[RMDB]
RNA sequence: GGGAACGACUCGAGUAGAGUCGAAAAACACGAUCGAGAGUACACGUGUACGUACGAACACGUGUUCGUACACUCACGAUCUCACACACUCACACACUCGUGAUCUCGAGAUCUCUCGUGAUCACACGAUCGAUCACACGUGAGAGUGUGAUCGAUCGCCUAUCCGUAGGUUCGCCUACGGAUAGGCAAAAGAAACAACAACAACAAC
Reactivity to 2A3 in 0.01 (KOAc 150mM, MgCl2 10mM, bicine 150mM(pH8.5), 24C), signal-to-noise 9, nucleotides 027 to 156: a000c120a030c090g050a080u090c060g010a010g010a010g110u110a030c080a020c100g020u040g020u080a050c120g030u070a030c070g030a050a000c100a030c150g180u230g010u130u020c010g010u040a020c020a010c060u010c000a020c020g010a040u010c010u060c010a050c000a010c000a020c060u130c040a060c010a010c000a030c130u150c120g000u010g000a010u000c020u010c020g030a040g040a300u080c200u030c000u000c110g000u010g000a000u000c000a000c000a010c030g000a000u000c000g000a000u010c000a000c000a000c010g060u110g110a170g010a050g070u000g000u000g000a000u000c000g000a000u000c000
Reactivity to DMS in 0.01 (KOAc 150mM, MgCl2 10mM, bicine 150mM(pH8.5), 24C), signal-to-noise 2, nucleotides 027 to 156: a090c080a130c060g000a120u000c030g010a100g020a100g000u010a120c070a150c070g050u010g000u010a090c090g050u010a080c040g000a050a050c000a110c280g020u000g000u010u010c040g010u000a030c030a100c040u010c030a070c020g000a070u000c000u000c020a130c080a100c100a060c050u000c040a070c060a100c060a080c070u000c120g000u010g010a020u000c000u000c000g030a010g000a170u010c300u000c010u000c020g000u010g000a030u010c020a050c030a060c030g000a020u010c000g000a020u000c000a000c020a020c030g010u050g000a300g030a160g000u080g020u000g020a000u010c010g000a020u010c030
The record gives the reactivity of an RNA of 207 nucleotides to 2A3 and DMS. Reactivities are given for positions 27 through 156. Conditions: 150 mM KOAc, 10 mM MgCl2 and 150 mM bicine (pH 8.5), 24 C. For 2A3, 41,195 sequencing reads were counted.